[RMDB]
RNA sequence: GGGAACGACUCGAGUAGAGUCGAAAAGUAAAGAUGGCACACAUACUGCCUUUGUACAUUUUAGUAAUGCGACGCCCAAAGGUUAUACAGGGUCAGCGUUGUAUGCAUCGAUCGGGAUAACCUCAUCCUCAAAUACGCCAUUCGUGGCGUAUUUGAGAAAAGAAACAACAACAACAAC
Reactivity to DMS in 0.01 (KOAc 150mM, MgCl2 10mM, bicine 150mM(pH8.5), 24C), signal-to-noise 2, nucleotides 027 to 126: g030u010a060a070a140g000a040u000g040g000c040a030c140a110c150a030u010a140c190u000g040c020c000u010u010u000g040u000a040c060a090u010u000u010u010a080g000u000a050a060u010g000c100g000a060c170g000c010c020c010a030a130a040g000g000u000u010a040u010a040c050a070g000g010g010u000c000a080g010c040g040u000u000g000u000a070u010g000c030a070u000c060g020a050u000c070g000g020g000a050u000a040a070c030c040u010c140a090u020c120
Reactivity to 2A3 in 0.01 (KOAc 150mM, MgCl2 10mM, bicine 150mM(pH8.5), 24C), signal-to-noise 2, nucleotides 027 to 126: g070u060a000a070a090g080a080u110g010g090c020a040c000a000c010a100u150a240c010u040g010c000c010u000u020u040g050u020a010c000a090u060u080u060u100a180g050u170a070a080u080g020c030g010a010c020g030c000c000c000a100a130a020g040g000u040u030a000u010a070c030a040g000g030g150u030c000a010g000c030g020u090u170g040u150a080u200g000c030a040u120c140g030a000u020c070g020g070g050a030u030a040a000c020c000u020c010a050u070c020